[RMDB]
RNA sequence: GGGAACGACUCGAGUAGAGUCGAAAAUUCGAUCAUCGCCGCUGCAUCGUAUGCGAUGGCUAAAGAAGAUAUUCGCUACUAUCUCAAUGGCAUGAUGAUUGAGAAGUCUCCGCAUGGUGGUGUCAGGGUAGUAGCCACUAACGGUCAUCAUAUGAUCCAGUGAGAAGGGUUUCGACCCUUCUCACUGAAAAGAAACAACAACAACAAC
Reactivity to DMS in 0.01 (KOAc 150mM, MgCl2 10mM, bicine 150mM(pH8.5), 24C), signal-to-noise 1, nucleotides 027 to 156: u000u000c000g010a080u010c010a030u000c010g000c030c070g000c070u010g000c190a070u010c050g000u000a100u000g040c100g030a010u000g020g030c040u000a060a140a130g010a110a130g010a170u010a160u010u000c110g020c010u000a000c010u000a020u000c010u000c060a070a030u000g010g050c020a160u010g040a050u010g030a070u000u000g000a120g030a150a150g000u000c040u010c000c030g010c040a130u000g030g000u000g060g030u000g050u000c060a020g010g040g010u010a060g040u000a190g040c010c050a020c100u000a120a150c120g000g000u010c000a010u000c020a130u000a140u000g000a120u000c040
Reactivity to 2A3 in 0.01 (KOAc 150mM, MgCl2 10mM, bicine 150mM(pH8.5), 24C), signal-to-noise 4, nucleotides 027 to 156: u050u000c030g020a010u010c000a000u000c010g010c020c000g040c030u070g010c040a070u060c090g040u070a080u240g050c040g010a010u020g040g030c040u080a130a060a050g130a070a000g040a110u090a120u110u090c020g000c000u000a020c000u000a010u010c010u000c070a080a140u070g000g000c030a040u170g050a020u040g010a040u060u050g030a020g000a070a100g090u010c050u000c050c030g050c070a090u130g060g030u040g020g010u020g060u090c050a070g060g050g020u020a020g010u010a000g040c010c000a040c010u080a080a030c020g000g020u010c020a040u000c010a040u050a060u230g010a020u000c030